[RMDB]
RNA sequence: GGGAACGACUCGAGUAGAGUCGAAAACGCUGGGUUUCUCGUGCUGACAUGGUCGGUCCUGAAGCGCGCACGGGACGACCAACAGCAGCACGAGGAAACCUGUGCUGAAGCGCGCACGGCAACCGAAAGGUGCGAAAUGGUCUGAUUCGUCAGACCACUAGGUUGCUAACUUCGGUUAGCAACCUAGAAAAGAAACAACAACAACAAC
Reactivity to 2A3 in 0.01 (KOAc 150mM, MgCl2 10mM, bicine 150mM(pH8.5), 24C), signal-to-noise 2, nucleotides 027 to 156: c050g040c060u070g010g020g010u020u040u030c010u000c000g030u010g000c000u040g040a210c110a260u150g020g000u060c050g070g260u100c000c030u060g030a160a080g080c000g020c020g010c080a070c020g010g040g000a000c000g010a000c000c090a030a030c080a090g090c000a010g000c000a000c000g020a010g000g030a030a020a000c000c000u040g010u030g000c010u050g050a120a060g000c030g010c010g000c020a030c060g090g000c030a070a150c030c010g080a080a000a020g010g000u000g010c010g040a090a060a010u040g000g020u010c000u000g000a040u040u040c150g050u040c120a000g000a000c000c000a000